[RMDB]
RNA sequence: GGGAACGACUCGAGUAGAGUCGAAAAAACUCUGGGGAGAGAAGGGAGGAUCGGAUGGGAAGAGUAUAUCCUACGGGAAUCCGUGGUUUCCCCUUAUGUCCAGCCCCUCCCCGGUCCUGGUGAAGGGGCUUGUUGGUAUGUUCGCAUACCAACAAGCAAAAGAAACAACAACAACAAC
Reactivity to DMS in 0.01 (KOAc 150mM, MgCl2 10mM, bicine 150mM(pH8.5), 24C), signal-to-noise 1, nucleotides 027 to 126: a030a000c080u010c000u010g000g000g010g000a080g010a070g010a150a090g000g000g010a260g010g000a130u000c140g020g010a110u000g000g000g010a060a030g000a170g060u020a090u000a070u020c090c000u010a100c040g010g000g000a170a050u000c010c050g000u000g000g010u000u000u000c010c000c000c040u000u000a020u030g010u010c070c080a030g000c030c000c010c000u000c000c010c010c030g020g000u000c050c010u010g040g030u010g020a140a030g020g000g040
An RNA of 177 nucleotides, treated with DMS and read out base by base. Reactivities are given for positions 27 through 126.